[RMDB]
RNA sequence: GGGAACGACUCGAGUAGAGUCGAAAAGCCACAGCGAACCGCCCGCUGCGUUGAGUGCGCAGUUGGUGCGCAAACCGAAGACUGCUCGUGCGGGGGUCAGAUCGCGCAAGACGAGCUCAGGCGUCCAGUGACUCGCUGAUUUCGAUCAGCGAGUCACAAAAGAAACAACAACAACAAC
Reactivity to 2A3 in 0.01 (KOAc 150mM, MgCl2 10mM, bicine 150mM(pH8.5), 24C), signal-to-noise 2, nucleotides 027 to 126: g090c000c000a030c020a020g060c020g050a050a100c000c000g000c040c010c000g030c000u000g000c000g070u060u100g180a090g050u300g000c070g000c040a000g000u100u180g000g000u140g030c000g000c080a000a190a000c030c010g020a020a000g040a100c030u040g050c000u060c040g070u070g010c090g000g070g000g000g000u190c040a030g010a140u050c020g040c000g000c040a010a020g010a050c000g000a010g020c000u000c110a020g070g000c000g030u050c050c000a040
Background: Structure probing data (2A3) for a 177-nucleotide construct. The RNA was probed in 150 mM KOAc, 10 mM MgCl2 and 150 mM bicine (pH 8.5) at 24 C.